An RNA of 177 nucleotides, treated with 2A3 and DMS and read out base by base.
For DMS the reverse transcriptase was MarathonRT.
Reactivities are rounded to 0.1 and cut off at 0 and 3.
2A3 is a SHAPE reagent: it acylates the 2'-hydroxyl of flexible nucleotides of all four kinds.
It was measured as part of the RMDB library OK1LIB.
For 2A3 the reverse transcriptase was SuperScript II with manganese.

RNA sequence: GGGAACGACUCGAGUAGAGUCGAAAAGACAAGAAUAAGAGGGACAAGAAUCUGACCUGCAACUCCUCGUGGUGUCGCUCGGAAACGUGCUCAACGCGCGCCCGACGCAGGCAGAAAGUAAGAAGAACAUAGCAUGCCUGUUCGCAGGCAUGCUAUGAAAAGAAACAACAACAACAAC
Reactivity to 2A3 in 0.01 (KOAc 150mM, MgCl2 10mM, bicine 150mM(pH8.5), 24C), signal-to-noise 3, nucleotides 027 to 126: g050a000c040a020a050g060a150a040u120a100a020g080a060g080g060g000a020c130a210a000g060a090a090u020c000u010g090a270c000c000u020g000c020a080a030c020u080c020c000u130c070g040u080g040g030u060g020u050c100g020c060u030c000g000g000a050a040a070c070g030u050g000c000u040c120a090a090c090g000c000g000c000g000c030c000c000g000a020c070g000c000a000g010g040c000a000g060a040a020a000g120u200a050a030g020a050a030g030a120a000
Reactivity to DMS in 0.01 (KOAc 150mM, MgCl2 10mM, bicine 150mM(pH8.5), 24C), signal-to-noise 2, nucleotides 027 to 126: g000a150c180a120a040g040a100a060u010a120a080g000a060g000g040g000a060c160a050a020g000a100a120u000c000u000g000a140c000c000u000g000c030a160a070c060u010c060c130u010c080g030u000g010g040u000g020u010c090g010c040u000c010g000g010a080a060a120c020g030u000g000c000u030c200a070a070c050g010c010g000c010g000c040c000c000g000a050c080g000c000a040g000g000c000a000g000a030a100a090g020u040a120a160g010a110a110g010a010a220